The record gives the reactivity of an RNA of 177 nucleotides to 2A3 and DMS.
Reactivities are given for positions 27 through 126.
The data come from the RNA Mapping Database (RMDB), libraries RFM100 and RFMREP.
Reactivities are rounded to 0.1 and cut off at 0 and 3.
RNA sequence: GGGAACGACUCGAGUAGAGUCGAAAAAAGGGACGGUUUUUCUAAUUAGAACAUUCCGUAUAAUUUUGGUGCAAUAGCAUAGAGAGCCGCAGUGUUACUCUUCUUUACAAAUCCUGUAUCUGGAGAGAAACAUUGGAGUAUUCGUACUCCAAUGUUUAAAAGAAACAACAACAACAAC
Reactivity to 2A3 in 0.01 (KOAc 150mM, MgCl2 10mM, bicine 150mM(pH8.5), 24C), signal-to-noise 9, nucleotides 027 to 126: a000a010g090g000g030a020c020g000g030u040u020u020u040u000c050u040a250a300u240u180a070g010a050a020c040a070u080u030c020c000g050u030a070u060a140a140u080u130u080u140g060g000u040g010c040a130a160u040a200g020c020a040u060a070g050a000g000a010g050c010c030g020c070a040g040u030g050u130u070a060c000u000c000u040u020c010u020u050u020a020c030a010a160a060u080c050c060u040g020u040a050u060c050u030g010g000a020g000a010g000
Reactivity to DMS in 0.01 (KOAc 150mM, MgCl2 10mM, bicine 150mM(pH8.5), 24C), signal-to-noise 8, nucleotides 027 to 126: a060a060g010g010g010a070c030g000g000u000u000u000u010u010c020u010a130a100u010u030a070g000a060a040c090a070u010u010c030c020g010u010a080u010a050a090u000u010u020u010g020g020u000g000c030a100a100u030a080g010c030a060u000a060g000a070g010a100g020c020c020g030c110a120g010u000g020u010u010a090c010u000c010u000u000c010u000u000u000a030c030a030a060a160u030c160c080u000g010u010a010u010c060u010g000g000a020g010a050g010
2A3 adducts were read by reverse transcription with SuperScript II with manganese. The RNA was probed in 150 mM KOAc, 10 mM MgCl2 and 150 mM bicine (pH 8.5) at 24 C.